An RNA of 207 nucleotides, treated with 2A3 and read out base by base.
2A3 adducts were read by reverse transcription with SuperScript II with manganese.
The data come from the RNA Mapping Database (RMDB), library M2RFPK.
RNA sequence: GGGAACGACUCGAGUAGAGUCGAAAAAUGAGAUCCCAUCUUGCACACUGAGCUAAUUUGAGAUUCUCAUGCCUCCUACUUGGAGAGAUCUGGACUAGAAGUCAGGGCAUCUGACUCUGCCAGCCACAAAACGUACAAGGCUUCGGCCUUGUACGAACGGGAUCAACCUGUUCGCAGGUUGAUCCCGAAAAGAAACAACAACAACAAC
Reactivity to 2A3 in 0.01 (KOAc 150mM, MgCl2 10mM, bicine 150mM(pH8.5), 24C), signal-to-noise 2, nucleotides 027 to 156: a000u050g010a000g000a080u020c000c010c000a000u040c040u010u040g010c030a040c030a120c300u220g070a010g010c070u110a020a000u130u000u050g010a020g010a010u170u040c000u010c020a020u070g030c000c050u050c000c000u090a140c050u170u150g010g020a050g000a020g030a200u030c000u000g020g080a120c030u100a170g020a170a020g070u000c000a000g050g030g140c050a110u070c140u000g000a000c000u000c000u010g000c000c010a010g030c000c000a080c050a060a150a040a020c000g010u000a000c000a000a000g000g000c000u020u040c170g090g020c000c010u000u000g010u030a000c000g000a000a000